Source: RMDB library OK2TST, as collected in RNAgym. Chemical mapping of a 177-nucleotide RNA with DMS and 2A3.

[RMDB]
RNA sequence: GGGAACGACUCGAGUAGAGUCGAAAAGACGAUUGUCGCAAUCAAAGGCGUGUCAUGGGGCAUCAGAUGCCUUUCCGCUCUGUUCUUCCAGAUUCAUCAAUGAGGGCCGGGCAAGGCGGAUACCUCAACCAUGAUCAUCCUUCGGGAUGAUCAUGGUAAAAGAAACAACAACAACAAC
Reactivity to DMS in 0.01 (KOAc 150mM, MgCl2 10mM, bicine 150mM(pH8.5), 24C), signal-to-noise 2, nucleotides 027 to 126: g000a050c070g000a140u000u000g030u000c030g050c080a050a040u010c150a090a120a190g050g000c030g030u000g010u000c030a140u000g000g000g010g020c060a030u010c100a100g010a250u010g010c000c060u000u000u000c040c030g030c000u010c030u000g010u000u000c110u000u000c010c030a070g000a090u010u000c170a070u000c070a110a110u010g010a040g030g000g000c060c120g050g030g010c210a020a020g020g000c010g000g000a030u000a060c030c000u000c060a060
Reactivity to 2A3 in 0.01 (KOAc 150mM, MgCl2 10mM, bicine 150mM(pH8.5), 24C), signal-to-noise 1, nucleotides 027 to 126: g080a000c040g170a180u020u250g070u160c010g010c090a060a100u120c070a050a050a160g030g050c050g000u070g000u040c030a080u080g000g000g020g070c010a020u020c020a110g110a210u190g000c020c000u000u060u000c000c010g030c010u010c000u000g030u040u000c000u070u000c020c020a030g010a200u030u120c020a050u040c030a150a110u090g010a040g000g110g000c030c090g020g000g040c020a010a000g080g000c080g010g000a030u060a070c010c020u080c010a040

DMS adducts were read by reverse transcription with MarathonRT. The RNA was probed in 150 mM KOAc, 10 mM MgCl2 and 150 mM bicine (pH 8.5) at 24 C.